An RNA of 177 nucleotides, treated with DMS and 2A3 and read out base by base. For 2A3, 9,496 sequencing reads were counted. For DMS the reverse transcriptase was MarathonRT. Conditions: 150 mM KOAc, 10 mM MgCl2 and 150 mM bicine (pH 8.5), 24 C. The DMS profile rests on 4,971 reads. Reactivities are given for positions 27 through 126.

RNA sequence: GGGAACGACUCGAGUAGAGUCGAAAAAGUCGAAAUAGAAUCAACUUGAAUUCGGGACCGCUAUUCGAAAUCUUAGUGAAACACUGGAUUUCUUAUCUCAUGUCUGCUUUUCGUGAAAAAAUACCAACGUUGUAAGGAAUUUCGAUUCCUUACAACGAAAAGAAACAACAACAACAAC
Reactivity to DMS in 0.01 (KOAc 150mM, MgCl2 10mM, bicine 150mM(pH8.5), 24C), signal-to-noise 3, nucleotides 027 to 126: a100g000u020c020g020a030a030a060u020a070g030a060a060u020c030a050a080c120u000u030g020a060a070u010u000c070g010g000g000a080c080c220g010c080u010a020u000u020c060g010a030a000a010u000c010u010u020a020g020u000g000a200a140a130c060a040c010u010g010g000a030u010u000u010c000u000u010a030u010c020u000c050a050u010g010u000c000u000g010c040u000u000u020u010c060g010u010g010a000a020a050a060a140a050u010a120c040c050a060a200
Reactivity to 2A3 in 0.01 (KOAc 150mM, MgCl2 10mM, bicine 150mM(pH8.5), 24C), signal-to-noise 9, nucleotides 027 to 126: a000g100u050c010g030a010a040a050u210a130g080a040a070u070c040a030a170c090u070u130g040a050a030u110u020c020g020g030g010a020c020c040g000c040u050a040u080u080c030g010a000a020a030u020c030u260u300a040g000u040g090a260a170a040c080a020c050u010g000g000a000u000u010u000c000u010u040a090u000c030u010c050a080u150g030u030c020u030g100c040u050u050u030u030c030g030u060g060a120a030a010a010a010a030u150a080c020c010a030a030